The record gives the reactivity of an RNA of 177 nucleotides to 2A3 and DMS. It was measured as part of the RMDB library OK1LIB. The RNA was probed in 150 mM KOAc, 10 mM MgCl2 and 150 mM bicine (pH 8.5) at 24 C. High 2A3 reactivity points to a flexible backbone, as in loops and unpaired stretches.

[RMDB]
RNA sequence: GGGAACGACUCGAGUAGAGUCGAAAAGAAAUAAGCAUACGAAAGAAAGGGUAAAUCGCUGUGAGUGUGAAAAGCAGCGUAAAUCCCGAAAGACACACGCACAGUCUGAAAAGUAUGCGAUAAGAAAGGGUUAUCAUUUGUUCGCAAAUGAUAACCCAAAAGAAACAACAACAACAAC
Reactivity to 2A3 in 0.01 (KOAc 150mM, MgCl2 10mM, bicine 150mM(pH8.5), 24C), signal-to-noise 1, nucleotides 027 to 126: g060a000a060a010u220a060a040g000c000a010u000a000c000g080a000a080a160g150a000a110a080g030g050g000u000a020a020a010u060c000g010c040u000g040u000g030a220g010u300g000u010g090a100a110a000a000g010c000a000g000c000g010u000a000a000a000u010c000c000c000g000a000a000a000g050a000c000a000c000a000c000g080c020a090c000a030g060u150c000u060g170a160a030a000a000g000u000a000u000g030c000g000a000u010a060a060g010a020a090a040
Reactivity to DMS in 0.01 (KOAc 150mM, MgCl2 10mM, bicine 150mM(pH8.5), 24C), signal-to-noise 3, nucleotides 027 to 126: g000a110a090a040u050a100a250g000c000a000u000a010c010g000a120a150a090g010a060a090a120g000g000g000u000a030a300a190u010c000g010c000u050g000u000g000a200g020u020g060u040g020a070a120a050a240g000c000a000g000c000g000u000a000a190a070u020c000c000c000g000a010a050a010g000a040c000a140c060a080c210g010c160a080c280a120g030u000c000u000g000a080a150a030a140g000u000a010u000g000c010g000a050u040a050a040g000a020a070a160